[RMDB]
RNA sequence: GGGAACGACUCGAGUAGAGUCGAAAAGAGCGCGUGGCCAAGGCGCUGGACGGCCGCCGCGACCUGCAAUUCGGCUACCUGGGCCUGCAGACCCUGUACGACCGCUACUUCCUGCACGUGCGCGGCAUAAUCCAUCCCAUUUCGAUGGGAUGGAUUAAAAAGAAACAACAACAACAAC
Reactivity to 2A3 in 0.01 (KOAc 150mM, MgCl2 10mM, bicine 150mM(pH8.5), 24C), signal-to-noise 2, nucleotides 027 to 126: g110a020g000c060g010c060g060u090g060g040c070c000a070a050g070g020c040g000c030u050g000g080a010c060g050g000c050c040g000c010c000g000c000g010a060c000c020u000g000c020a020a060u140u100c030g010g000c000u000a040c050c100u070g000g020g010c040c020u050g040c010a010g010a220c000c010c000u020g050u060a040c060g140a210c010c000g060c060u060a070c040u120u070c010c040u040g020c070a020c090g060u130g060c010g010c000g030g000c000a040
Reactivity to DMS in 0.01 (KOAc 150mM, MgCl2 10mM, bicine 150mM(pH8.5), 24C), signal-to-noise 4, nucleotides 027 to 126: g010a100g000c030g020c050g030u000g030g020c060c040a110a130g000g010c110g020c000u000g010g000a080c140g020g010c030c030g020c040c030g010c020g000a070c050c040u000g010c060a060a130u010u000c060g000g010c020u000a040c090c120u000g010g000g020c020c020u010g000c190a110g000a100c010c010c010u000g000u000a050c160g000a100c030c020g010c190u010a080c090u000u010c100c050u000g010c060a040c110g000u000g000c040g010c020g000g000c040a100